[RMDB]
An RNA of 177 nucleotides, treated with DMS and 2A3 and read out base by base. 2A3 adducts were read by reverse transcription with SuperScript II with manganese. For DMS the reverse transcriptase was MarathonRT. DMS (dimethyl sulfate) methylates the pairing face of unpaired adenines and cytosines. The 2A3 profile rests on 16,234 reads.
RNA sequence: GGGAACGACUCGAGUAGAGUCGAAAAGCGAUCAGCUCAUCACGGCUGAUGUUGGUUAGCCGCAGUCCUAGCUUGACGAGCUUAUUGGCCGGAAACCAUUCGUCGAACAGCUUGGCGGGCAUGACGAAGCUAUCCAAAGAUUCGUCUUUGGAUAGCUAAAAGAAACAACAACAACAAC
Reactivity to DMS in 0.01 (KOAc 150mM, MgCl2 10mM, bicine 150mM(pH8.5), 24C), signal-to-noise 9, nucleotides 027 to 126: g010c080g010a030u000c020a020g010c010u000c140a130u010c230a090c230g000g000c010u000g010a010u000g010u000u000g020g010u000u000a070g020c010c000g020c070a090g010u010c020c030u000a050g010c020u000u010g010a110c030g010a090g010c210u000u010a090u010u000g020g020c030c040g020g000a130a110a260c030c030a050u000u000c020g000u000c000g000a060a110c270a050g000c010u000u000g010g010c030g000g000g010c010a050u000g010a030c060g010a150
Reactivity to 2A3 in 0.01 (KOAc 150mM, MgCl2 10mM, bicine 150mM(pH8.5), 24C), signal-to-noise 9, nucleotides 027 to 126: g090c050g040a060u020c010a010g000c030u040c050a220u120c040a070c170g020g000c010u020g020a030u030g090u070u090g100g020u020u060a020g020c010c020g140c110a030g030u100c000c010u020a010g010c000u030u060g020a020c020g010a010g030c040u100u140a100u190u150g030g000c060c060g210g070a080a030a020c010c010a040u020u020c010g010u000c020g020a140a070c030a050g010c000u000u040g010g000c030g010g020g010c060a080u160g010a010c040g030a020